Chemical mapping of a 177-nucleotide RNA with DMS and 2A3. DMS adducts were read by reverse transcription with MarathonRT. 2A3 adducts were read by reverse transcription with SuperScript II with manganese. The reactions ran in a buffer of 150 mM KOAc, 10 mM MgCl2 and 150 mM bicine (pH 8.5), at 24 C.

[RMDB]
RNA sequence: GGGAACGACUCGAGUAGAGUCGAAAAGCUUUAUUUGUUGAUAAAUUGGUUGAAGAAGUGCUCUCAAAUUCCUCAACUUGACCCUCAACAAAAUUUACAAUUUUUCUAGCACUUUCAACAAUCCAAGCCGUAGUAAUCAUUUCGAUGAUUACUACGGAAAAGAAACAACAACAACAAC
Reactivity to DMS in 0.01 (KOAc 150mM, MgCl2 10mM, bicine 150mM(pH8.5), 24C), signal-to-noise 2, nucleotides 027 to 126: g030c080u050u000u020a020u000u000u000g000u000u000g010a040u030a000a030a080u000u000g010g010u010u000g000a040a110g020a030a000g010u000g000c000u030c130u020c180a060a060a110u000u000c030c000u000c070a100a060c090u050u010g030a030c020c030c050u020c040a080a060c100a010a020a040a080u020u020u070a080c090a030a040u040u000u000u000u030c070u050a050g000c020a010c010u000u010u010c000a060a240c080a030a010u050c030c010a040a070g010
Reactivity to 2A3 in 0.01 (KOAc 150mM, MgCl2 10mM, bicine 150mM(pH8.5), 24C), signal-to-noise 8, nucleotides 027 to 126: g030c030u120u200u120a160u160u120u080g000u010u020g020a100u070a170a160a110u070u040g020g000u000u000g010a040a010g010a010a010g030u020g030c020u010c010u010c070a080a090a100u080u040c000c020u040c020a050a060c000u020u050g020a070c000c000c000u020c010a020a070c010a030a080a080a100u160u210u130a110c100a060a120u090u100u040u040u070c060u100a000g000c010a000c000u080u210u100c040a070a070c010a020a040u050c040c020a040a010g010